[RMDB]
Structure probing data (2A3 and DMS) for a 177-nucleotide construct. It was measured as part of the RMDB libraries RFM100 and RFMREP. 2A3 is a SHAPE reagent: it acylates the 2'-hydroxyl of flexible nucleotides of all four kinds. Conditions: 150 mM KOAc, 10 mM MgCl2 and 150 mM bicine (pH 8.5), 24 C.
RNA sequence: GGGAACGACUCGAGUAGAGUCGAAAAGGGCUACACGCGGGCUACAAUGGAUAGGACAAUGGGUAACUACACCGAAAGGUGGCGUCAAUCUCUUAAACCUAUCCUUAGUUCGGAUUGAGGGCUGGAAAUACCUACUUGUGUUCGCACAAGUAGGUAUAAAAGAAACAACAACAACAAC
Reactivity to 2A3 in 0.01 (KOAc 150mM, MgCl2 10mM, bicine 150mM(pH8.5), 24C), signal-to-noise 7, nucleotides 027 to 126: g040g010g000c020u060a030c040a030c080g100c020g000g010g000c010u030a030c070a080a160u150g000g000a000u000a010g020g010a020c090a080a080u150g000g000g020u070a020a000c000u030a020c000a000c000c010g030a070a000a010g000g000u000g000g000c010g010u000c020a060a060u020c030u010c000u070u150a100a150a080c010c000u000a000u000c000c000u000u010a000g000u000u020c030g020g030a110u040u120g030a120g020g030g030c050u040g020g020a050a200
Reactivity to DMS in 0.01 (KOAc 150mM, MgCl2 10mM, bicine 150mM(pH8.5), 24C), signal-to-noise 7, nucleotides 027 to 126: g010g000g000c040u010a060c110a100c210g020c050g010g000g010c030u000a050c300a110a070u020g010g010a010u000a000g000g000a080c130a070a080u020g010g000g000u010a080a010c010u020a100c000a010c000c000g020a090a090a140g000g010u000g010g000c120g000u000c050a070a120u010c000u000c020u000u010a090a160a070c000c000u000a020u000c000c000u000u010a030g010u010u010c050g000g000a140u020u020g010a120g000g000g000c040u010g000g010a070a060